Notes
An RNA of 207 nucleotides, treated with DMS and 2A3 and read out base by base. It was measured as part of the RMDB library RNAMAK. The reactions ran in a buffer of 150 mM KOAc, 10 mM MgCl2 and 150 mM bicine (pH 8.5), at 24 C. DMS adducts were read by reverse transcription with MarathonRT.
RNA sequence: GGGAACGACUCGAGUAGAGUCGAAAAAGUGUUUCGACACUAUUACCACCUUUGUGCGUGAUACACCGAAGAACACAGGUGGUACAACCCAUUGGGUUGUACGUAACAUCCUGUGGGAGGUGUCACGCACUCUGGUCUGCGGGACAUUCGUGUCCAAAAAAUAAACCCAAUUCGUUGGGUUUAUUUUAAAAGAAACAACAACAACAAC
Reactivity to DMS in 0.01 (KOAc 150mM, MgCl2 10mM, bicine 150mM(pH8.5), 24C), signal-to-noise 4, nucleotides 027 to 156: a080g020u000g010u000u010u000c120g020a120c020a030c020u000a100u010u000a140c020c020a060c010c010u000u000u000g020u000g020c000g010u000g020a100u000a060c020a080c010c020g010a130a180g020a190a190c010a000c010a010g010g020u010g020g010u000a000c010a020a050c000c000c010a300u000u010g050g020g020u000u010g010u000a010c020g030u000a050a010c080a100u010c000c000u000g000u000g010g000g010a140g010g030u010g020u000c000a010c000g020c010a010c020u000c010u000g030g010u000c050u000g000c030g010g010g000a060c020a110u000u010c190g010u000g020u000c000c020a000a000
Reactivity to 2A3 in 0.01 (KOAc 150mM, MgCl2 10mM, bicine 150mM(pH8.5), 24C), signal-to-noise 8, nucleotides 027 to 156: a000g060u040g020u060u110u160c190g080a020c000a000c020u030a060u050u230a040c020c010a000c000c000u010u000u010g010u010g000c000g000u010g020a070u100a260c010a010c020c020g250a300a030g020a100a000c000a000c000a000g010g000u000g000g000u010a000c000a000a000c010c000c080a250u240u300g010g000g010u000u000g000u000a000c000g010u020a020a040c020a220u170c000c000u000g000u010g000g020g020a020g010g000u000g000u000c000a000c000g000c000a000c000u000c000u000g010g010u010c030u140g140c190g070g010g020a010c030a050u090u140c250g100u050g020u080c030c040a110a050